[RMDB]
RNA sequence: GGGAACGACUCGAGUAGAGUCGAAAAGCUAGGCAUUUCGAUGCCUAGCGAGCGCAGAGUCUAUGCAUCUCUGAAUCACACAACAGCCGUCUCUAUGCGUGGGAGUAUCCCUCUUCGGAGGGAUAAAAUCGCUAUCGAGAUUCGUCUCGAUAGCGAUAAAAGAAACAACAACAACAAC
Reactivity to 2A3 in 0.01 (KOAc 150mM, MgCl2 10mM, bicine 150mM(pH8.5), 24C), signal-to-noise 2, nucleotides 027 to 126: g000c000u020a010g000g000c010a010u040u030u140c240g100a000u010g000c000c000u000a000g010c030g000a010g020c120g020c000a000g000a010g010u030c020u050a110u210g030c000a090u040c000u000c000u060g080a080a060u100c020a010c040a040c010a090a130c020a060g010c030c050g060u030c000u000c000u070a080u110g050c040g070u080g020g040g000a040g050u020a000u020c000c010c010u000c040u020u020c140g130g010a000g040g040g000a000u000a000a000a010
Reactivity to DMS in 0.01 (KOAc 150mM, MgCl2 10mM, bicine 150mM(pH8.5), 24C), signal-to-noise 2, nucleotides 027 to 126: g010c000u000a010g000g000c000a010u000u000u020c150g010a010u010g010c000c000u010a010g000c020g000a060g010c130g000c020a040g010a080g000u010c090u000a080u020g020c120a060u010c010u000c030u000g000a120a100u000c060a060c080a060c060a050a080c130a120g010c040c040g000u000c010u010c050u000a070u000g010c060g050u000g000g000g010a140g010u010a010u000c010c000c000u000c000u000u020c230g020g000a040g000g000g010a010u010a020a010a090